An RNA of 207 nucleotides, treated with 2A3 and DMS and read out base by base. The reactions ran in a buffer of 150 mM KOAc, 10 mM MgCl2 and 150 mM bicine (pH 8.5), at 24 C. For 2A3, 5,562 sequencing reads were counted. DMS adducts were read by reverse transcription with MarathonRT.
RNA sequence: GGGAACGACUCGAGUAGAGUCGAAAAUGGCAGUUAAACCGUGUAGUACCGAUGGAGGUUGGAAACAAUGCACAUCACUACCGGGUCUUGGGCAGUGCGAUAGCGAUGGGAUUCACCUUCGCAGGAUGUGCAUGGAAGUAUAAACACAACGGUCGUUGUGAAUAAGUAGGUUCGCCUACUUAUUCACAAAAGAAACAACAACAACAAC
Reactivity to 2A3 in 0.01 (KOAc 150mM, MgCl2 10mM, bicine 150mM(pH8.5), 24C), signal-to-noise 6, nucleotides 027 to 156: u070g030g040c040a020g030u110u140a080a110a040c040c020g020u050g020u060a060g000u020a020c040c040g050a050u100g030g050a060g040g010u030u050g060g060a060a070a020c070a070a020u040g020c010a010c000a010u010c010a010c130u070a060c010c030g030g020g020u050c040u060u110g050g020g010c050a040g010u040g080c040g090a060u090a040g010c010g030a020u030g030g020g010a080u170u220c100a100c050c000u020u020c010g010c000a000g030g010a020u030g000u000g000c020a010u020g000g030a070a010g030u070a020u070a160a070a010c060a010c030a080a050c030g020g010u020c040g050u040u020
Reactivity to DMS in 0.01 (KOAc 150mM, MgCl2 10mM, bicine 150mM(pH8.5), 24C), signal-to-noise 3, nucleotides 027 to 156: u010g010g010c010a060g010u010u010a080a110a070c010c030g020u010g010u010a120g040u000a090c020c050g010a080u000g020g010a060g000g050u000u000g010g000a190a100a140c040a070a030u000g010c020a020c010a030u000c010a300c030u000a050c020c030g010g040g010u000c090u010u010g020g010g010c020a040g030u000g040c040g010a140u000a050g000c020g010a060u000g030g020g020a300u000u010c050a060c020c010u000u000c020g030c020a090g040g020a030u000g000u000g000c020a030u000g000g020a030a070g010u000a160u000a090a080a080c060a020c030a040a060c040g000g000u000c050g020u000u000